[RMDB]
RNA sequence: GGGAACGACUCGAGUAGAGUCGAAAAGAAAGAAAGAAAGCAGCAGCGUUUUCGUUUUAGAAUUCCUACGCUUUACCGUUGCCAAGUUAUUGGGCAAAGCGUUUGGAUUCUAAAACGAAAUAGCUAAUCUAAUUUAAGCUUUCGAGCUUAAAUUAGAAAAAGAAACAACAACAACAAC
Reactivity to DMS in 0.01 (KOAc 150mM, MgCl2 10mM, bicine 150mM(pH8.5), 24C), signal-to-noise 4, nucleotides 027 to 126: g010a080a070a080g000a080a070a070g000a100a090a070g010c100a070g010c160a040g010c020g010u010u000u000u000c000g010u010u000u010u000a000g000a010a010u010u000c010c010u000a010c020g010c000u000u000u000a040c080c070g000u010u040g020c160c100a060a130g010u030u040a090u020u010g010g000g030c060a030a040a010g010c000g020u000u010u000g000g010a010u000u000c010u010a000a000a000a000c000g000a000a000a010u000a130g020c010u000a070a110
Reactivity to 2A3 in 0.01 (KOAc 150mM, MgCl2 10mM, bicine 150mM(pH8.5), 24C), signal-to-noise 9, nucleotides 027 to 126: g060a010a030a000g070a020a070a010g040a030a130a010g060c100a010g010c020a010g010c040g020u080u050u030u060c000g000u000u000u010u000a000g010a000a000u130u090c000c000u010a010c000g010c010u060u040u050a130c070c090g200u140u120g090c030c010a100a040g070u200u140a190u250u270g070g000g000c030a010a000a000g000c000g000u040u120u110g000g000a000u000u000c000u000a000a000a000a000c000g000a000a000a000u010a000g000c000u000a000a030
Conditions: 150 mM KOAc, 10 mM MgCl2 and 150 mM bicine (pH 8.5), 24 C. This 177-nucleotide RNA was probed chemically with DMS and 2A3. The data come from the RNA Mapping Database (RMDB), libraries RFM100 and RFMREP.